[RMDB]
RNA sequence: GGGAACGACUCGAGUAGAGUCGAAAAAUGCUAACGCCACCAAAUACCACCAGCGAACGCAGCUUCAGGUAUUUGCUGUAACUCUGGACGUUUUCGUCAAUCUGCGCAGCCAGUUCGCGAGUCGGCGAAGGGGUUGACAUUUCGAUGUCAACCCCUUAAAAGAAACAACAACAACAAC
Reactivity to DMS in 0.01 (KOAc 150mM, MgCl2 10mM, bicine 150mM(pH8.5), 24C), signal-to-noise 1, nucleotides 027 to 126: a090u000g000c060u000a040a210c170g010c030c060a100c050c050a030a020a030u000a050c020c000a260c300c130a070g000c020g000a080a050c260g020c220a110g000c070u000u010c190a090g000g020u000a010u010u010u000g000c080u000g000u010a050a090c130u010c020u010g010g010a070c060g030u000u010u000u000c030g000u000c020a060a040u000c030u040g020c110g000c030a140g010c060c090a020g000u000u000c040g010c020g030a030g030u000c080g010g010c030g000
Structure probing data (DMS) for a 177-nucleotide construct.
The RNA was probed in 150 mM KOAc, 10 mM MgCl2 and 150 mM bicine (pH 8.5) at 24 C.
The DMS profile rests on 637 reads.